The record gives the reactivity of an RNA of 207 nucleotides to 2A3. The reactions ran in a buffer of 150 mM KOAc, 10 mM MgCl2 and 150 mM bicine (pH 8.5), at 24 C.
RNA sequence: GGGAACGACUCGAGUAGAGUCGAAAAUGAAGCAAAUCCAUAAUUGCCAAUGAUGAGCAAUUCGAUAUUGCCGCCUAAAAACGGUUAGCCGGGGCUGCUAGAGCCUUGUUACCAAAGAUAGCCGGCGUUACGGCAUGAUGGUUCGCCAUCAUGCCAAGUAUCCGCUUGUAUUCGUACAAGCGGAUACAAAAGAAACAACAACAACAAC
Reactivity to 2A3 in 0.01 (KOAc 150mM, MgCl2 10mM, bicine 150mM(pH8.5), 24C), signal-to-noise 1, nucleotides 027 to 156: u120g010a090a010g000c010a000a000a050u040c010c020a040u100a220a030u030u000g000c010c020a050a220u240g060a160u100g010a120g030c000a010a000u020u070c060g020a020u050a180u170u080g010c000c020g000c000c000u100a120a120a060a060a000c040g010g000u050u040a010g030c050c020g000g000g020g000c000u030g060c070u150a060g050a000g210c000c000u000u010g020u020u070a050c000c020a040a120a020g070a020u040a000g060c000c030g030g060c040g070u150u060a030c040g020g000c010a000u000g000a000u000g000g000u040u100c220g000c070c000a000u010c000a000u000g000c020c000a000a000